[RMDB]
RNA sequence: GGGAACGACUCGAGUAGAGUCGAAAAUCAUUCUGAUUCAACAGCAGAGAUCAAAGAAAAGACUUCUGUUUUCUGGCCACCAGAUAUAUGUUAUCUGUGCUUAAAGAAUUGAAAAACACACAUCAAAAUUCCUCAAGAAAUUCGUUUCUUGAGGAAUAAAAGAAACAACAACAACAAC
Reactivity to DMS in 0.01 (KOAc 150mM, MgCl2 10mM, bicine 150mM(pH8.5), 24C), signal-to-noise 4, nucleotides 027 to 126: u010c050a070u010u000c030u000g020a100u000u010c070a090a240c230a030g020c020a020g020a030g000a050u010c020a040a070a140g000a110a080a120a120g000a110c040u000u000c050u000g010u010u010u020u010c050u020g010g000c110c080a070c070c020a000g000a010u000a060u020a070u010g000u010u020a020u010c020u000g010u020g020c050u030u000a100a090a090g010a000a020u040u010g000a040a060a050a090a080c140a030c140a080c140a060u020c070a020a100a130
Reactivity to 2A3 in 0.01 (KOAc 150mM, MgCl2 10mM, bicine 150mM(pH8.5), 24C), signal-to-noise 7, nucleotides 027 to 126: u050c000a020u090u000c030u050g090a080u100u080c040a090a050c010a100g030c010a000g010a010g030a100u040c060a100a140a050g160a080a150a060a030g040a060c020u050u020c010u100g070u030u020u060u020c060u030g020g020c050c020a060c010c020a030g060a020u010a000u020a030u110g190u170u020a010u000c000u000g050u060g030c010u030u080a120a070a040g020a040a030u100u100g040a070a020a000a110a000c080a010c020a010c010a070u120c040a050a070a060
Description
Structure probing data (DMS and 2A3) for a 177-nucleotide construct. The RNA was probed in 150 mM KOAc, 10 mM MgCl2 and 150 mM bicine (pH 8.5) at 24 C. For 2A3 the reverse transcriptase was SuperScript II with manganese.